The data come from the RNA Mapping Database (RMDB), library RNAMAK. An RNA of 207 nucleotides, treated with 2A3 and read out base by base.
[RMDB]
RNA sequence: GGGAACGACUCGAGUAGAGUCGAAAAGGGGUCACUGGAGCUCCCACAGGAGCAUCGAUCUGUACUGAAGCCUCCACGGUACAGGGAGCUCCUGAGGGAGCGAUGAAAGUGACGGAGGCACCCAAAAGGAUAAAUGGUGUUCGCACCAUUUAUCCAAGGUCAUUAUGUACUUCGGUACAUAAUGACCAAAAGAAACAACAACAACAAC
Reactivity to 2A3 in 0.01 (KOAc 150mM, MgCl2 10mM, bicine 150mM(pH8.5), 24C), signal-to-noise 2, nucleotides 027 to 156: g000g000g090g030u000c000a000c000u010g010g000a010g010c000u000c010c000c000a010c000a000g010g000a000g010c010a020u300c010g010a000u000c000u000g000u000a000c010u040g050a090a020g010c000c000u000c000c000a010c000g000g000u000a000c000a010g010g010g000a010g010c000u000c030c000u000g000a020g000g020g000a000g000c000g010a020u020g000a000a000a000g000u000g000a000c010g000g000a000g000g000c000a030c010c000c010a050a080a040a040g010g000a000u010a000a000a010u010g030g030u010g030u090u180c260g040c120a000c010c010a000u000u000u000a000u000c000c000a000a010